[RMDB]
RNA sequence: GGGAACGACUCGAGUAGAGUCGAAAACCGCUGACCGGUGGGACGCGAACGUGUACUACGACCCCGAACCUGGUGUCCCUGGUCGAUCGGUAUCGCGUUGGGGCGCCUUUCUGGACGACGUCGGCGGGCAUAAAAGCCCAUUCGUGGGCUUUUAUGCAAAAGAAACAACAACAACAAC
Reactivity to DMS in 0.01 (KOAc 150mM, MgCl2 10mM, bicine 150mM(pH8.5), 24C), signal-to-noise 2, nucleotides 027 to 126: c000c010g020c020u000g010a040c040c020g000g000u000g010g000g010a040c010g010c000g000a120a110c130g020u010g010u000a100c080u000a070c020g000a160c050c010c030c060g000a030a030c240c080u020g000g030u010g000u000c010c020c000u000g010g020u000c010g040a020u000c220g010g020u000a120u010c010g020c020g010u010u010g020g000g000g000c030g010c010c000u010u010u010c060u000g040g020a270c110g000a110c150g010u000c010g020g010c010g000g000
Reactivity to 2A3 in 0.01 (KOAc 150mM, MgCl2 10mM, bicine 150mM(pH8.5), 24C), signal-to-noise 2, nucleotides 027 to 126: c010c010g010c040u000g010a000c020c030g090g010u050g010g000g010a020c010g000c040g080a180a070c150g040u050g050u120a040c040u050a010c060g070a080c010c000c000c030g030a030a030c080c050u060g020g000u020g020u090c000c000c000u040g040g090u210c000g020a050u060c090g030g080u200a030u060c040g000c010g060u060u040g000g000g040g010c000g030c010c020u020u040u010c050u050g030g030a040c040g010a000c020g030u010c010g020g000c000g030g000

Conditions: 150 mM KOAc, 10 mM MgCl2 and 150 mM bicine (pH 8.5), 24 C. Chemical mapping of a 177-nucleotide RNA with DMS and 2A3. As a SHAPE reagent, 2A3 marks flexible, mostly unpaired nucleotides at the ribose 2'-OH. The data come from the RNA Mapping Database (RMDB), library OK2TST. DMS adducts were read by reverse transcription with MarathonRT.